[RMDB]
RNA sequence: GGGAACGACUCGAGUAGAGUCGAAAAUACAGACGAGGUAACUUACGGUUAGACAUUGGAGACUUAAGAUAAAUAGCUAAAUGUUACACAGCUAAUAAGUUGCAGAGCUUGGAUUUUAACCCGGAACUCUCUAAUUCUAGGGCCUAUCCUGCCCAUAGUGCUGGAUACUAUUCGUAGUAUCCAGCACAAAAGAAACAACAACAACAAC
Reactivity to 2A3 in 0.01 (KOAc 150mM, MgCl2 10mM, bicine 150mM(pH8.5), 24C), signal-to-noise 1, nucleotides 027 to 156: u120a010c050a000g070a070c010g000a020g130g030u020a030a090c000u110u120a040c080g000g020u010u090a030g000a040c070a020u030u050g040g020a030g010a050c080u080u190a060a020g030a080u140a080a260a040u150a000g000c020u030a040a070a070u040g030u060u070a070c130a030c030a050g010c000u010a050a040u110a300a000g020u100u020g000c000a000g000a000g200c050u030u010g000g020a020u000u080u110u300a060a040c000c000c000g000g060a060a070c000u030c030u030c040u110a060a050u230u000c010u140a160g010g000g010c010c010u030a070u040c000c000u000g000c000c030c020a020u040a020
An RNA of 207 nucleotides, treated with 2A3 and read out base by base. The RNA was probed in 150 mM KOAc, 10 mM MgCl2 and 150 mM bicine (pH 8.5) at 24 C. The data come from the RNA Mapping Database (RMDB), library OK3TST. Reactivities are given for positions 27 through 156. The 2A3 profile rests on 485 reads.